[RMDB]
RNA sequence: GGGAACGACUCGAGUAGAGUCGAAAAAAGGAAUUAGCGUGCCUUCAUGCUAAGGGUUUGAUAUCUGCUAAAACCCUGUGCAUUCAUCAAUGCAGGUUAAGCCAAAGGGAUGUCCCGACCGGAGGCCAAAAGUUCGCUACGUUCGCGUAGCGAACAACGAUUAAUUCUAGUUCGCUAGAAUUAAUCGAAAAGAAACAACAACAACAAC
Reactivity to DMS in 0.01 (KOAc 150mM, MgCl2 10mM, bicine 150mM(pH8.5), 24C), signal-to-noise 4, nucleotides 027 to 156: a040a060g000g010a070a090u000u000a060g010c050g020u010g010c050c030u000u000c030a060u000g040c020u000a150a010g010g030g010u000u000u000g010a150u000a050u010c060u000g020c050u000a120a030a010a020c010c000c010u000g010u000g020c030a080u000u000c040a060u000c130a090a130u000g010c000a050g020g010u000u010a050a100g000c020c020a010a300a250g000g000g010a090u000g000u000c010c010c020g010a080c020c020g000g010a300g000g020c010c040a010a060a090a080g020u000u000c000g010c000u000a000c020g020u010u010c290g010c030g030u000a000g020c000g020a010a000c000a030a060
Reactivity to 2A3 in 0.01 (KOAc 150mM, MgCl2 10mM, bicine 150mM(pH8.5), 24C), signal-to-noise 5, nucleotides 027 to 156: a010a000g110g010a050a050u090u050a080g050c050g030u050g050c040c060u130u260c060a040u050g000c010u050a030a020g010g000g000u010u000u000g040a040u050a050u090c020u020g010c000u040a030a030a010a010c000c010c010u020g050u060g030c040a050u040u120c020a040u090c040a150a120u150g000c000a000g060g020u090u160a090a010g000c000c000a010a010a000g030g000g010a030u030g030u030c000c000c000g010a000c000c010g000g000a010g010g000c000c000a000a040a000a030g000u000u000c000g000c000u000a030c000g020u020u030c120g000c010g110u000a000g010c000g000a000a000c000a000a000
This 207-nucleotide RNA was probed chemically with DMS and 2A3.
The data come from the RNA Mapping Database (RMDB), library M2RFPK.
Conditions: 150 mM KOAc, 10 mM MgCl2 and 150 mM bicine (pH 8.5), 24 C.
For DMS the reverse transcriptase was MarathonRT.
For 2A3, 6,110 sequencing reads were counted.
The DMS profile rests on 12,986 reads.